[RMDB]
Annotation:
The data come from the RNA Mapping Database (RMDB), libraries RFM100 and RFMREP. The record gives the reactivity of an RNA of 177 nucleotides to DMS and 2A3. The RNA was probed in 150 mM KOAc, 10 mM MgCl2 and 150 mM bicine (pH 8.5) at 24 C.
RNA sequence: GGGAACGACUCGAGUAGAGUCGAAAACAAUGAGACACCACCCUUUGAAACUGGAGGAUCUAACCCUGAGCCGUGAAUCCGGCCAGAGGACCGUGUCAGCCGGUCAGUUUUACUGGGGCGGUAUCCUAUGCAAUAGUGUUUUCGAACACUAUUGCAUAAAAGAAACAACAACAACAAC
Reactivity to DMS in 0.01 (KOAc 150mM, MgCl2 10mM, bicine 150mM(pH8.5), 24C), signal-to-noise 4, nucleotides 027 to 126: c090a090a070u020g020a130g010a050c120a030c010c010a060c010c000c020u000u000u020g000a010a020a030c030u000g000g020a140g000g010a090u010c110u020a120a140c020c020c000u010g000a140g000c000c010g010u000g030a140a160u020c300c000g000g010c010c010a000g000a160g020g000a040c080c080g000u000g000u020c160a130g000c070c000g000g030u020c000a040g000u010u000u010u010a010c130u010g000g000g010g020c060g030g000u000a040u010c010c020u000
Reactivity to 2A3 in 0.01 (KOAc 150mM, MgCl2 10mM, bicine 150mM(pH8.5), 24C), signal-to-noise 8, nucleotides 027 to 126: c030a010a210u300g030a050g010a070c020a010c020c000a010c000c000c000u010u020u040g030a010a010a000c000u010g010g060a040g030g060a090u070c040u110a060a110c000c000c000u020g010a030g030c000c000g020u050g100a030a030u040c040c000g000g010c000c000a010g050a150g010g020a050c020c040g050u060g150u170c070a030g060c040c000g030g090u030c010a000g000u000u000u010u030a030c030u010g020g000g000g000c090g000g000u020a050u010c000c010u010